An RNA of 177 nucleotides, treated with DMS and 2A3 and read out base by base. Values cover nucleotides 27 to 126. It was measured as part of the RMDB library OK2TRN. For 2A3, 2,538 sequencing reads were counted. 2A3 adducts were read by reverse transcription with SuperScript II with manganese.

RNA sequence: GGGAACGACUCGAGUAGAGUCGAAAAACACCUGUUCCUAUGACAUCGAGGAGUGCCAGUCGAAUCCGUGCAAAUACGGCGGCACAUGUGUCAACACCCACGGAUCUUACCAGUGAGUACCACGCUCUGGUCAAUGAAAGUUCGCUUUCAUUGACCAAAAAGAAACAACAACAACAAC
Reactivity to DMS in 0.01 (KOAc 150mM, MgCl2 10mM, bicine 150mM(pH8.5), 24C), signal-to-noise 4, nucleotides 027 to 126: a110c170a120c010c020u000g000u000u010c010c010u000a070u000g000a050c050a020u000c120g010a080g010g020a110g020u000g010c010c000a130g050u000c060g020a150a070u000c030c050g020u000g010c130a060a050a130u000a080c050g000g040c110g010g020c010a050c050a060u010g020u000g010u010c030a040a100c100a060c060c010c020a070c090g010g000a080u000c060u000u010a070c050c040a090g010u000g020a060g020u000a110c080c100a040c050g000c040u000c100
Reactivity to 2A3 in 0.01 (KOAc 150mM, MgCl2 10mM, bicine 150mM(pH8.5), 24C), signal-to-noise 2, nucleotides 027 to 126: a010c060a070c010c000u020g020u010u020c000c000u060a120u110g030a020c020a080u090c090g070a090g090g080a100g070u010g000c020c050a050g030u050c040g030a050a030u050c050c050g080u110g100c040a070a080a060u170a080c020g030g010c040g000g000c000a000c000a030u090g010u000g020u020c000a020a020c030a080c020c010c010a030c030g010g020a060u000c040u040u070a040c030c000a060g000u010g050a010g030u060a090c040c000a050c060g060c000u000c030